[RMDB]
Annotation:
Chemical mapping of a 207-nucleotide RNA with 2A3. The RNA was probed in 150 mM KOAc, 10 mM MgCl2 and 150 mM bicine (pH 8.5) at 24 C. 2A3 adducts were read by reverse transcription with SuperScript II with manganese. The data come from the RNA Mapping Database (RMDB), library M2RFOK. The 2A3 profile rests on 643 reads.

RNA sequence: GGGAACGACUCGAGUAGAGUCGAAAAACAUGCUGGCCAACCCAACCCCACGAUCCUCCAUCGGCAUGAUCAUGAUGUGUUCUGAAAUAUCAGGCCAGUAAAUCACCAUGCUCGUGCUGGUAAAGGCAACUUAUGCCCAAGUUCGCUUGGGCAUAAACCCCAUUUCUCUGUUCGCAGAGAAAUGGGGAAAAGAAACAACAACAACAAC
Reactivity to 2A3 in 0.01 (KOAc 150mM, MgCl2 10mM, bicine 150mM(pH8.5), 24C), signal-to-noise 1, nucleotides 027 to 156: a010c050a070u040g020c000u010g030g030c000c000a030a080c020c000c010a030a150c000c000c020c000a000c030g020a100u060c020c010u070c050c000a030u010c010g000g010c000a010u010g030a000u020c020a010u000g110a090u140g000u000g020u130u010c040u060g030a090a050a000u210a030u190c100a030g010g000c000c030a020g000u030a030a020a050u090c010a010c020c000a000u010g000c000u010c050g000u010g000c000u010g030g000u050a030a060a080g040g000c020a000a020c020u060u010a000u000g000c000c000c010a020a000g000u010u010c020g080c180u000u010g060g040g000c000a000u000a000a000a010